An RNA of 207 nucleotides, treated with DMS and 2A3 and read out base by base. For 2A3, 2,120 sequencing reads were counted. Reactivities are given for positions 27 through 156. 2A3 adducts were read by reverse transcription with SuperScript II with manganese.
RNA sequence: GGGAACGACUCGAGUAGAGUCGAAAAAUCCUCAGGUUCAUAAGCGUGAUGAUUGGGUGUUCAUGCUCCAUGCAUGACAUGUGCCUCCUUUGAACCUUGUUACGACCUUGGCACAUUACCCAUCAGAAAAAGACGUUCGCGUUCGCGCGAACGUCAACACCAUACGUAGGUUCGCCUACGUAUGGUGAAAAGAAACAACAACAACAAC
Reactivity to DMS in 0.01 (KOAc 150mM, MgCl2 10mM, bicine 150mM(pH8.5), 24C), signal-to-noise 1, nucleotides 027 to 156: a100u000c000c030u000c030a050g000g040u000u000c020a050u000a080a110g020c080g110u010g000a190u010g010a030u010u030g050g010g020u000g020u010u000c010a040u000g020c020u010c160c280a140u010g060c000a020u010g000a060c300a120u000g030u010g020c020c010u010c110c000u000u020u000g000a040a010c020c020u000u000g020u000u000a170c190g010a060c130c090u000u000g030g010c010a000c010a170u000u010a070c010c020c000a050u000c050a090g000a050a060a110a060a110g000a050c020g030u010u000c000g110c010g050u000u000c270g050c010g080c010g000a020a010c000g000u000c000a020a110
Reactivity to 2A3 in 0.01 (KOAc 150mM, MgCl2 10mM, bicine 150mM(pH8.5), 24C), signal-to-noise 4, nucleotides 027 to 156: a000u020c010c000u040c000a000g030g000u010u010c000a020u050a290a040g040c120g130u150g130a080u020g010a030u100u200g020g020g000u080g070u100u060c000a000u000g000c010u070c140c120a100u250g000c000a000u000g010a000c000a000u020g000u000g000c000c000u040c000c000u020u020u000g000a000a000c000c010u000u070g090u050u110a110c150g030a090c060c060u100u140g000g000c010a010c000a030u050u160a020c000c000c010a000u000c000a000g170a020a080a030a040a000g000a000c000g010u010u000c000g030c010g050u000u060c250g000c000g000c000g150a000a000c000g000u000c000a000a000